Annotation: Chemical mapping of a 177-nucleotide RNA with DMS and 2A3. For 2A3, 1,264 sequencing reads were counted.
RNA sequence: GGGAACGACUCGAGUAGAGUCGAAAACGUACCACUCGACGUCUGAAGGCCAUCUCUGACGUCACGCGAUAAACCGGUUAUAUCAUGUUGCUAUGGAAGGAGAGGGGAGCCAAUCAGCGGGCGAUACCUAAAUCAACGCUUUCGAGCGUUGAUUUAGAAAAGAAACAACAACAACAAC
Reactivity to DMS in 0.01 (KOAc 150mM, MgCl2 10mM, bicine 150mM(pH8.5), 24C), signal-to-noise 3, nucleotides 027 to 126: c090g010u000a120c030c000a100c110u000c040g000a030c020g000u000c010u000g000a080a130g010g000c060c060a070u010c020u000c020u010g010a120c040g000u000c010a050c130g020c060g010a040u000a040a090a130c100c070g020g030u000u010a110u000a040u000c030a060u000g010u000u000g010c050u000a050u000g010g010a080a080g010g010a060g000a050g000g000g020g030a180g010c020c010a090a070u000c030a030g020c070g010g010g020c040g010a060u000a030c090
Reactivity to 2A3 in 0.01 (KOAc 150mM, MgCl2 10mM, bicine 150mM(pH8.5), 24C), signal-to-noise 2, nucleotides 027 to 126: c080g070u070a030c000c010a030c040u010c080g010a010c000g120u030c010u030g110a120a000g020g030c070c000a100u070c040u000c020u040g030a010c000g030u040c020a010c030g090c040g040a030u020a050a160a010c090c090g130g000u190u140a180u020a040u250c030a060u110g060u080u040g090c040u150a090u250g040g060a120a030g000g000a010g000a010g020g020g020g010a000g000c010c010a020a100u090c020a030g070c020g010g070g080c010g020a020u080a060c030